[RMDB]
RNA sequence: GGGAACGACUCGAGUAGAGUCGAAAAGAAGGCGGGGAGGAGGGGGCUGAGGGCUAACCUACGGAAAUUCCUGAGCUCCCCUGACGUCCAGGCCGUCCCCUCUCCGAGUGAAGGGAGACUCCGGGAUUAACCGACGGCUUCGGCCGUCGGAAAAGAAACAACAACAACAAC
Reactivity to DMS in 0.01 (KOAc 150mM, MgCl2 10mM, bicine 150mM(pH8.5), 24C), signal-to-noise 3, nucleotides 027 to 129: g050a020a060g000g040c050g000g090g000g050a070g000g090a060g010g020g050g040g030c030u060g020a030g020g020g090c120u000a140a120c070c040u030a000c140g020g030a140a180a010u000u000c020c020u020g000a030g060c080u020c000c000c000c060u060g000a050c160g010u020c070c030a150g040g000c080c040g030u020c050c130c000c070u040c060u080c090c080g020a050g000u000g060a090a140g000g000g000a000g020a110c100u010c010c040g020g000g040a000u000u000a130a080
Reactivity to 2A3 in 0.01 (KOAc 150mM, MgCl2 10mM, bicine 150mM(pH8.5), 24C), signal-to-noise 1, nucleotides 027 to 129: g090a040a050g010g000c020g020g020g020g020a000g020g040a050g000g000g000g000g000c010u050g180a010g010g010g010c000u000a040a080c000c000u070a070c010g020g090a020a010a040u090u020c000c010u000g040a000g020c020u150c000c010c000c000u010g100a020c040g180u030c000c040a020g010g070c000c020g040u040c000c050c010c000u000c010u000c000c010g020a000g100u100g040a000a000g070g010g000a020g000a000c000u070c010c010g000g000g030a040u060u110a070a090